[RMDB]
About this RNA: Structure probing data (DMS and 2A3) for a 207-nucleotide construct. Reactivities are rounded to 0.1 and cut off at 0 and 3. It was measured as part of the RMDB library M2RFPK. Values cover nucleotides 27 to 156. 2A3 adducts were read by reverse transcription with SuperScript II with manganese.
RNA sequence: GGGAACGACUCGAGUAGAGUCGAAAAUCAAUCGCAUUGUUGGGUGAAAGUUGGAGGAUAAAUCCUCACCAAGAUUUAAACUAAGCAAGAGAUAUAAGGCCGCUCCUUAUAUUGCGACUUGCUUAAAGAUAUCCGGCAAAGUUCGCUUUGCCGGAAAGUUUAUCGUAUCGUUCGCGAUACGAUAAACAAAAGAAACAACAACAACAAC
Reactivity to DMS in 0.01 (KOAc 150mM, MgCl2 10mM, bicine 150mM(pH8.5), 24C), signal-to-noise 1, nucleotides 027 to 156: u010c030a090a110u010c030g040c080a230u000u000g000u000u010g010g000g030u000g010a070a050a060g010u000u030g000g010a020g030g010a130u010a060a090a130u000c010c010u000c040a140c050c080a060a100g010a100u000u000u000a090a080a110c090u000a040a030g000c000a050a040g000a300g000a040u000a010u000a010a040g000g010c150c270g000c170u000c010c000u010u010a060u010a000u000u020g010c040g010a100c030u000u000g010c010u000u000a000a040a080g010a140u000a100u010c010c020g010g000c000a010a010a000g010u000u020c300g000c030u000u000u010g000c020c000g010g000a010a010a030
Reactivity to 2A3 in 0.01 (KOAc 150mM, MgCl2 10mM, bicine 150mM(pH8.5), 24C), signal-to-noise 1, nucleotides 027 to 156: u050c010a050a020u090c010g050c090a060u090u000g010u040u070g030g000g030u120g030a190a040a060g120u180u140g010g060a050g000g010a010u090a070a200a120u080c000c000u000c030a030c030c000a080a000g010a120u060u250u240a150a070a020c050u000a010a010g020c000a000a000g010a000g010a010u000a010u010a020a000g000g000c070c080g070c170u280c070c010u010u000a000u000a000u010u100g080c040g090a010c040u000u000g000c000u000u000a020a020a000g010a010u090a020u100c030c000g000g000c010a000a000a000g000u010u010c010g000c140u020u000u000g000c000c000g050g020a010a010a010